The record gives the reactivity of an RNA of 177 nucleotides to DMS. DMS adducts were read by reverse transcription with MarathonRT. Reactivities are given for positions 27 through 126. The reactions ran in a buffer of 150 mM KOAc, 10 mM MgCl2 and 150 mM bicine (pH 8.5), at 24 C. The DMS profile rests on 2,426 reads.
RNA sequence: GGGAACGACUCGAGUAGAGUCGAAAACUACCUGGCCGCGCCGGGCCGGGUAGAGGCACGCGGAGAGGACGUCGAGGUCGACAUGCCGGAUUGUGACGCGCUGCUGGACGUUGUGAGCGACCUCCUCUGCACAGGUACUCUUCGGAGUACCUGUGCAAAAAGAAACAACAACAACAAC
Reactivity to DMS in 0.01 (KOAc 150mM, MgCl2 10mM, bicine 150mM(pH8.5), 24C), signal-to-noise 2, nucleotides 027 to 126: c010u000a000c010c000u000g000g010c010c020g000c070g000c110c080g000g000g030c010c030g010g010g020u000a010g000a090g020g030c060a050c060g030c080g000g000a050g010a070g000g000a090c160g010u000c040g020a100g000g000u000c030g010a080c060a070u000g000c050c000g020g010a110u000u000g030u010g010a080c080g000c060g000c040u000g000c030u000g010g010a070c060g020u000u000g000u000g010a150g000c030g010a060c030c030u000c010c050u000c080